[RMDB]
Source information: An RNA of 177 nucleotides, treated with 2A3 and DMS and read out base by base. Values cover nucleotides 27 to 126. The reactions ran in a buffer of 150 mM KOAc, 10 mM MgCl2 and 150 mM bicine (pH 8.5), at 24 C. 2A3 is a SHAPE reagent: it acylates the 2'-hydroxyl of flexible nucleotides of all four kinds. The DMS profile rests on 7,581 reads.
RNA sequence: GGGAACGACUCGAGUAGAGUCGAAAAUAGUGGAUAUAAAAACGGAAAAGCUGAGAUGGUUAACUUAAAUGUAUUAGAUAAAUUGGCAGAUGCUCUAGGUGUUAAUGUAAGUGAACUAUUUACUAGACAUUUAAUCAUGGUUCGCCAUGAUUAAAUGAAAAGAAACAACAACAACAAC
Reactivity to 2A3 in 0.01 (KOAc 150mM, MgCl2 10mM, bicine 150mM(pH8.5), 24C), signal-to-noise 3, nucleotides 027 to 126: u100a020g070u040g040g060a020u030a010u050a120a140a010a030a040c040g020g000a060a070a050a010g000c060u050g030a020g010a110u050g050g000u080u040a070a030c020u020u060a030a120a080u110g030u050a070u080u050a060g030a060u090a110a110a050u030u000g030g000c030a000g040a170u080g020c010u010c010u050a030g030g050u050g030u090u060a060a070u100g000u040a050a030g020u000g040a030a010c030u020a060u050u030u040a060c010u020a020g020a070
Reactivity to DMS in 0.01 (KOAc 150mM, MgCl2 10mM, bicine 150mM(pH8.5), 24C), signal-to-noise 6, nucleotides 027 to 126: u000a070g020u000g010g010a070u000a090u020a030a070a080a100a070c100g000g000a080a070a110a140g020c070u000g010a090g000a070u000g010g000u000u000a060a070c050u000u000a030a070a080u010g000u000a060u010u010a090g000a100u010a020a050a070u000u000g000g010c030a050g010a070u000g010c060u000c050u000a060g000g010u000g010u000u000a040a080u010g010u000a020a060g010u000g010a070a050c100u000a030u000u000u000a070c060u000a080g000a300